[RMDB]
This 177-nucleotide RNA was probed chemically with DMS and 2A3.
The RNA was probed in 150 mM KOAc, 10 mM MgCl2 and 150 mM bicine (pH 8.5) at 24 C.
2A3 is a SHAPE reagent: it acylates the 2'-hydroxyl of flexible nucleotides of all four kinds.
The DMS profile rests on 1,618 reads.
Source: RMDB library RFM100, as collected in RNAgym.

RNA sequence: GGGAACGACUCGAGUAGAGUCGAAAAAGUGCUCGUACGCGAGCACAAGGCGGACAUUGGAUGAAUCCUACCCGGUGAGGUUUUUUUUUUCCAACCACACCGGACGAGAUUUCAUCCGACAGCAGAACACUUGAAGCGGAUUCGUCCGCUUCAAGUGAAAAGAAACAACAACAACAAC
Reactivity to DMS in 0.01 (KOAc 150mM, MgCl2 10mM, bicine 150mM(pH8.5), 24C), signal-to-noise 2, nucleotides 027 to 126: a040g050u010g000c010u000c010g020u000a200c300g100c030g010a000g000c000a000c010a000a110g000g000c010g000g000a110c200a090u000u050g000g000a020u000g000a030a000u000c020c020u000a250c280c000c000g000g080u000g000a050g030g000u000u000u000u000u000u000u000u010u000u200c300c120a050a000c010c000a090c000a000c010c010g030g000a040c090g000a170g010a010u000u000u000c010a010u000c050c000g010a010c070a090g040c100a140g000a140a180
Reactivity to 2A3 in 0.01 (KOAc 150mM, MgCl2 10mM, bicine 150mM(pH8.5), 24C), signal-to-noise 2, nucleotides 027 to 126: a000g010u000g000c000u000c000g030u060a030c270g020c040g110a000g000c000a020c000a010a020g090g000c030g000g030a120c080a100u120u200g030g000a000u000g000a000a020u000c020c030u030a050c040c000c000g010g000u010g010a110g050g120u060u000u010u000u000u000u000u000u040u050c060c010a000a000c000c000a010c000a000c010c000g000g000a020c010g040a070g010a010u110u160u080c000a000u000c000c010g000a000c000a000g010c000a020g040a140a010